The data come from the RNA Mapping Database (RMDB), library M2PK90.
An RNA of 177 nucleotides, treated with DMS and 2A3 and read out base by base.
For DMS the reverse transcriptase was MarathonRT.
The 2A3 profile rests on 4,189 reads.
The RNA was probed in 150 mM KOAc, 10 mM MgCl2 and 150 mM bicine (pH 8.5) at 24 C.
RNA sequence: GGGAACGACUCGAGUAGAGUCGAAAAAUGAACGUGGUGGGGGUAAGUUAGUAGAAGAUCUAAUGGUACGCGGUGGGUUUUCGACUGUACUCGAAACCACCACCACCACCAAGUCGUUCCCACCGAAUAUUAUCAUCCCAUUCGUGGGAUGAUAAUAAAAAGAAACAACAACAACAAC
Reactivity to DMS in 0.01 (KOAc 150mM, MgCl2 10mM, bicine 150mM(pH8.5), 24C), signal-to-noise 4, nucleotides 027 to 126: a080u020g010a110a090c120g030u000g010g010u000g010g000g000g010g000u000a090a180g000u010u000a040g010u010a120g010a110a130g000a080u000c020u010a030a050u000g010g000u000a060c110g010c110g010g030u000g000g020g000u000u000u000u000c000g000a010c100u010g000u010a050c140u000c050g010a030a030a060c040c030a040c010c020a070c030c030a010c020c040a050c040c080a030a050g010u000c010g000u000u000c000c000c000a080c110c100g010a070a130
Reactivity to 2A3 in 0.01 (KOAc 150mM, MgCl2 10mM, bicine 150mM(pH8.5), 24C), signal-to-noise 2, nucleotides 027 to 126: a000u080g000a040a020c040g000u010g000g000u010g020g020g000g010g000u030a060a020g020u030u050a010g010u010a020g030a270a010g020a020u020c000u030a030a000u060g150g020u090a020c050g000c050g080g000u000g000g060g000u080u040u000u010c000g000a000c020u120g100u190a050c030u010c030g020a010a020a010c000c000a000c000c010a020c000c000a000c000c000a010c000c000a020a010g000u000c000g000u000u000c020c000c000a010c020c030g060a100a070